[RMDB]
RNA sequence: GGGAACGACUCGAGUAGAGUCGAAAAUAUUAGAUUUAAGCUCACACUGGUCAAAAGGAACCAAGAUACAAAGAACUCUGAGCUGUCAUCGUCCCCAUCUCUGUGAGCCACAACCAACAGCAGGACCACGGAUAAAGGCUUUCGAGCCUUUAUCCGUAAAAGAAACAACAACAACAAC
Reactivity to DMS in 0.01 (KOAc 150mM, MgCl2 10mM, bicine 150mM(pH8.5), 24C), signal-to-noise 2, nucleotides 027 to 126: u030a040u050u040a120g030a050u000u000u000a170a160g000c020u000c000a030c170a190c020u000g050g000u040c040a110a050a070a140g020g000a060a050c060c040a120a180g000a120u000a060c180a110a090a080g010a050a070c130u100c050u000g000a040g000c000u000g070u000c090a080u010c020g000u000c000c020c000c070a190u000c030u000c090u000g000u000g000a220g000c000c070a070c100a080a070c130c100a050a060c130a020g030c080a010g000g000a110c130c040
Reactivity to 2A3 in 0.01 (KOAc 150mM, MgCl2 10mM, bicine 150mM(pH8.5), 24C), signal-to-noise 1, nucleotides 027 to 126: u280a030u150u230a050g030a040u000u100u080a100a000g000c000u040c000a050c000a000c040u000g060g000u000c040a000a000a300a160g090g000a050a050c000c000a050a030g030a030u120a120c190a100a180a000g030a040a090c000u050c040u190g000a010g000c000u020g110u070c010a000u050c000g020u010c000c000c000c000a000u000c000u000c000u040g000u050g030a000g000c000c000a050c000a130a100c050c000a050a030c010a060g030c050a030g040g000a000c010c000